[RMDB]
RNA sequence: GGGAACGACUCGAGUAGAGUCGAAAAACUUCCGCAACGAGGGCGUGGAUGCUACCCACAACCCAGAGUUCACCUCCUUGGAGGCCUACCAAGCGUACGGCAACUGGGACACCAUGCGGGAGCUGACGGACAAUUUCUAUUUCGAUAGAAAUUGUCCAAAAGAAACAACAACAACAAC
Reactivity to DMS in 0.01 (KOAc 150mM, MgCl2 10mM, bicine 150mM(pH8.5), 24C), signal-to-noise 5, nucleotides 027 to 126: a120c040u010u000c000c000g030c020a070a130c150g020a120g010g030g010c300g010u000g010g010a070u000g010c240u010a170c090c010c010a070c050a120a170c010c000c010a060g000a160g000u000u000c100a090c050c020u000c020c020u010u020g010g000a090g000g010c050c050u010a090c020c030a070a090g010c180g020u010a020c210g030g020c070a040a090c040u000g000g000g000a180c200a070c060c060a150u000g010c020g000g010g000a030g000c070u000g010a190c220
Reactivity to 2A3 in 0.01 (KOAc 150mM, MgCl2 10mM, bicine 150mM(pH8.5), 24C), signal-to-noise 3, nucleotides 027 to 126: a010c010u030u000c010c010g000c020a030a050c090g080a170g020g040g040c080g020u010g000g030a070u200g130c050u170a160c010c020c000a010c020a020a090c010c020c010a030g010a010g080u090u120c030a080c030c010u060c010c000u010u030g060g030a040g120g000c000c020u040a030c000c010a190a050g040c060g170u060a030c100g030g000c020a050a040c020u000g000g000g030a030c050a040c090c000a040u070g000c010g020g000g000a000g030c020u050g040a050c080